[RMDB]
This 177-nucleotide RNA was probed chemically with DMS.
RNA sequence: GGGAACGACUCGAGUAGAGUCGAAAAUUGACGGUAUCCGCGCCCCACGUUUGCUGGCUGCUCCAUGCGCCCGGCCCCGCGGCGACGUCGGCGCGCGCGGGAAGCGCGGCGAGCGCGGCCGCGCAUAUAAAUAGCACGAGUUCGCUCGUGCUAUUUAAAAAGAAACAACAACAACAAC
Reactivity to DMS in 0.01 (KOAc 150mM, MgCl2 10mM, bicine 150mM(pH8.5), 24C), signal-to-noise 1, nucleotides 027 to 126: u000u000g020a120c060g000g020u000a110u010c030c000g030c010g010c020c020c010c030a080c100g010u000u000u010g020c040u000g020g020c040u010g010c030u010c070c120a150u000g010c050g000c140c040c030g010g040c070c000c040c050g030c060g020g020c020g010a030c060g020u010c060g010g010c090g010c020g030c010g020c010g000g010g010a090a080g000c000g030c010g010g020c080g020a020g010c050g000c060g000g020c020c010g020c010g070c020a060u010a050
The RNA was probed in 150 mM KOAc, 10 mM MgCl2 and 150 mM bicine (pH 8.5) at 24 C. DMS adducts were read by reverse transcription with MarathonRT. Reactivities are given for positions 27 through 126.